[RMDB]
RNA sequence: GGGAACGACUCGAGUAGAGUCGAAAAUGGGGGCCAGGCACAGUGGUACAUGCCUGUAAUCCUGGCACUUCGGGAGGCCGAGGCAGGCAGAUCACUUGAGGCCAGGAGUUCAAGACCAGCCUGGCCACACUCAGGCGUGGUUCGCCACGCCUGAGUGAAAAGAAACAACAACAACAAC
Reactivity to 2A3 in 0.01 (KOAc 150mM, MgCl2 10mM, bicine 150mM(pH8.5), 24C), signal-to-noise 2, nucleotides 027 to 126: u160g100g000g000g010g030c000c000a000g010g000c000a050c010a050g110u050g030g000u050a100c030a120u100g080c010c010u030g040u030a050a000u080c010c010u020g000g000c010a110c060u090u100c000g000g130g000a020g070g040c040c000g050a030g170g000c060a020g030g000c010a030g060a260u070c060a050c110u050u070g030a050g020g000c000c010a000g020g020a000g010u060u300c120a230a020g060a080c020c020a000g080c010c000u000g030g000c000c000a000
Reactivity to DMS in 0.01 (KOAc 150mM, MgCl2 10mM, bicine 150mM(pH8.5), 24C), signal-to-noise 2, nucleotides 027 to 126: u000g030g020g020g000g040c020c000a010g000g010c040a210c160a080g010u020g010g000u000a060c030a080u000g000c050c000u000g000u000a070a120u010c020c030u020g000g000c000a090c010u000u000c110g000g000g010a160g000g000c000c040g000a130g000g000c020a000g010g000c000a020g040a030u000c020a000c000u030u020g000a100g010g010c010c020a050g020g000a140g020u000u000c100a050a100g040a080c040c010a200g000c000c000u000g000g000c010c010a030
Annotation
The data come from the RNA Mapping Database (RMDB), library OK1LIB. Structure probing data (2A3 and DMS) for a 177-nucleotide construct. Reactivities are rounded to 0.1 and cut off at 0 and 3. DMS adducts were read by reverse transcription with MarathonRT. 2A3 adducts were read by reverse transcription with SuperScript II with manganese. The DMS profile rests on 2,512 reads.